[RMDB]
RNA sequence: GGGAACGACUCGAGUAGAGUCGAAAACAAAUCACUUAAUCACCCCCCACAUCUGUCACUGACCCUGAUCUUUCCACAGAACCCCAAUGUGCUCAGUAACCUCAUAAUCUACUCAUCUGACCCUUGAUCAUUAAAAGUGUCCUCCAAACUACCCAGGCCGAGUAUAUGAAUUCGUUCAUAUACUCGGAAAAGAAACAACAACAACAAC
Reactivity to DMS in 0.01 (KOAc 150mM, MgCl2 10mM, bicine 150mM(pH8.5), 24C), signal-to-noise 1, nucleotides 027 to 156: c030a050a110a140u000c030a040c070u020u010a080a070u000c030a210c030c010c030c020c000c020a100c030a070u010c030u000g030u000c080a090c050u000g000a130c000c020c000u000g020a060u010c020u010u000u000c020c010a110c110a060g030a080a050c030c030c000c040a120a040u000g000u000g000c000u000c020a050g010u010a040a050c060c040u000c020a040u000a100a100u000c010u000a070c040u000c010a120u000c060u020g010a240c040c000c020u000u010g000a070u000c040a100u020u000a090a090a030a080g010u000g000u000c010c010u010c030c030a010a060a080c040u010a100c000c040c010a100g000g030
Reactivity to 2A3 in 0.01 (KOAc 150mM, MgCl2 10mM, bicine 150mM(pH8.5), 24C), signal-to-noise 2, nucleotides 027 to 156: c030a020a090a040u180c060a070c090u140u300a150a150u300c040a170c030c040c000c030c070c000a030c040a030u050c030u040g090u040c010a010c070u050g040a020c000c010c030u010g010a030u020c050u060u070u010c050c010a060c010a090g060a100a080c010c000c000c000a020a010u100g020u030g020c010u010c030a030g040u060a050a070c020c020u040c010a060u040a120a040u030c020u050a030c010u020c020a100u020c020u040g100a100c000c020c000u020u080g060a050u040c050a090u010u230a070a090a010a020g050u000g010u010c000c000u000c000c040a090a080a060c040u100a030c020c000c010a040g100g000
Conditions: 150 mM KOAc, 10 mM MgCl2 and 150 mM bicine (pH 8.5), 24 C.
The record gives the reactivity of an RNA of 207 nucleotides to DMS and 2A3.
2A3 adducts were read by reverse transcription with SuperScript II with manganese.
For DMS, 2,089 sequencing reads were counted.
Reactivities are given for positions 27 through 156.
Source: RMDB library OK3TST, as collected in RNAgym.